[RMDB]
RNA sequence: GGGAACGACUCGAGUAGAGUCGAAAAAGAGCAAUCUGCGAUGGCGUGCCUUUUGUUUAAUGAGUCUGCGAGUCAGUGUUUGUGGCAAGACUAAGGGCUUCCGGCCCGGAGUCGCAGCGAAAGCAAGCAACAAAAUGUAUUUCGAUACAUUUUGUUGAAAAGAAACAACAACAACAAC
Reactivity to DMS in 0.01 (KOAc 150mM, MgCl2 10mM, bicine 150mM(pH8.5), 24C), signal-to-noise 9, nucleotides 027 to 126: a050g010a100g010c060a080a070u010c040u000g010c070g010a070u010g010g000c050g010u000g010c030c020u000u010u000u000g010u010u010u010a080a090u020g000a080g010u010c010u000g010c040g010a070g010u010c020a090g020u010g010u010u010u010g010u010g010g000c060a090a110g000a030c030u010a150a140g000g000g000c010u010u030c240c160g010g000c000c010c010g000g010a100g010u000c010g010c090a100g010c040g000a070a070a110g000c070a090a090g010
Reactivity to 2A3 in 0.01 (KOAc 150mM, MgCl2 10mM, bicine 150mM(pH8.5), 24C), signal-to-noise 9, nucleotides 027 to 126: a000g120a010g010c030a030a070u050c030u070g010c040g060a050u060g060g060c030g020u040g010c010c000u070u070u050u060g150u050u100u090a150a120u150g020a020g080u020c010u020g010c040g050a030g050u040c040a050g040u040g070u130u140u140g110u090g050g010c050a070a030g010a010c010u030a030a070g000g000g000c000u130u060c110c110g040g000c000c000c000g000g000a010g010u000c010g000c020a010g010c010g040a040a010a000g040c060a040a010g040